[RMDB]
RNA sequence: GGGAACGACUCGAGUAGAGUCGAAAAAGAUGAACGGAAAAAUCACCUCCAGAGGACCCCUUCAGCGAACAGAAGAGACUCCCCUCGAUAGGAGCAAGACCAUAGCGAUGGGGGGAGAUGCUAGGAGUACCGCAAACCUUCGGGUUUGCGAAAAGAAACAACAACAACAAC
Reactivity to DMS in 0.01 (KOAc 150mM, MgCl2 10mM, bicine 150mM(pH8.5), 24C), signal-to-noise 3, nucleotides 027 to 129: a080g030a080u040g030a080a000c080g010g040a000a080a090a150a050u020c080a100c150c020u020c060c050a110g010a000g000g000a150c110c030c060c050u030u000c030a100g020c010g000a050a070c110a160g030a080a060g030a080g030a160c070u000c000c000c000c000u050c080g020a120u040a110g040g000a030g040c100a040a060g000a170c070c070a030u040a130g000c220g000a110u010g000g000g130g020g000g000a050g000a050u100g040c060u030a000g000g030a060g010u020a050c110
Reactivity to 2A3 in 0.01 (KOAc 150mM, MgCl2 10mM, bicine 150mM(pH8.5), 24C), signal-to-noise 2, nucleotides 027 to 129: a020g130a040u120g000a000a060c080g020g050a100a230a000a000a000u060c000a040c030c090u000c000c000a020g010a050g000g080a150c000c000c000c000u090u090c080a000g050c030g030a040a030c000a000g100a060a000g000a050g110a100c000u000c000c000c000c000u020c010g050a030u130a070g010g010a070g000c020a000a030g030a030c060c000a060u070a030g000c000g020a060u040g030g000g000g010g010g010a000g020a040u070g040c000u030a080g020g000a040g000u010a140c000
This 170-nucleotide RNA was probed chemically with DMS and 2A3. The DMS profile rests on 6,073 reads. 2A3 adducts were read by reverse transcription with SuperScript II with manganese. Source: RMDB library 15KLIB, as collected in RNAgym. The reactions ran in a buffer of 150 mM KOAc, 10 mM MgCl2 and 150 mM bicine (pH 8.5), at 24 C.